[RMDB]
RNA sequence: GGGAACGACUCGAGUAGAGUCGAAAACGCCGUGCAGGUAGAACAUGGAAGUCAAGAAGUCAGGGUUGAACUCGUGCCUCCCGUAAAGAAAGUCUCGCGAAUCGGAACCAUGGAUCAGCGCGGAAGCAGCAUCACGUUCGGCUUCUCCGUCAAUGCGAACGUUAAACGGAUUCGUCCGUUUAACGUUAAAAGAAACAACAACAACAAC
Reactivity to 2A3 in 0.01 (KOAc 150mM, MgCl2 10mM, bicine 150mM(pH8.5), 24C), signal-to-noise 3, nucleotides 027 to 156: c060g000c030c030g020u040g020c090a060g030g000u130a050g010a060a010c040a060u080g050g010a060a020g040u080c050a030a020g040a040a030g050u090c100a120g000g060g000u040u110g050a040a010c030u030c090g040u060g000c010c010u010c000c000c010g040u090a020a110a030g080a030a100a010g030u030c040u050c080g040c040g040a050a040u030c000g010g030a010a050c020c010a050u070g020g000a060u040c020a020g030c010g000c010g060g000a010a010g000c030a000g000c000a020u050c030a040c080g060u100u050c010g020g000c000u050u030c020u000c010c000g010u060c060a020a080u160g030c050g050
Reactivity to DMS in 0.01 (KOAc 150mM, MgCl2 10mM, bicine 150mM(pH8.5), 24C), signal-to-noise 2, nucleotides 027 to 156: c030g020c040c020g020u000g030c040a060g030g050u000a060g010a060a120c040a070u000g000g020a070a080g040u020c060a050a100g000a090a110g020u000c030a120g020g000g020u000u010g010a020a060c030u000c030g020u000g000c050c020u010c010c000c020g010u000a050a080a090g000a090a070a120g010u010c030u000c000g000c010g000a100a090u000c040g000g020a070a070c040c020a050u000g020g020a110u010c050a140g020c070g000c000g010g010a070a080g000c030a080g010c040a110u000c080a080c080g000u000u000c010g020g000c030u000u000c000u000c020c020g010u010c060a050a090u000g030c030g000
The record gives the reactivity of an RNA of 207 nucleotides to 2A3 and DMS. The data come from the RNA Mapping Database (RMDB), library OK3TST. The reactions ran in a buffer of 150 mM KOAc, 10 mM MgCl2 and 150 mM bicine (pH 8.5), at 24 C. Values cover nucleotides 27 to 156. DMS adducts were read by reverse transcription with MarathonRT.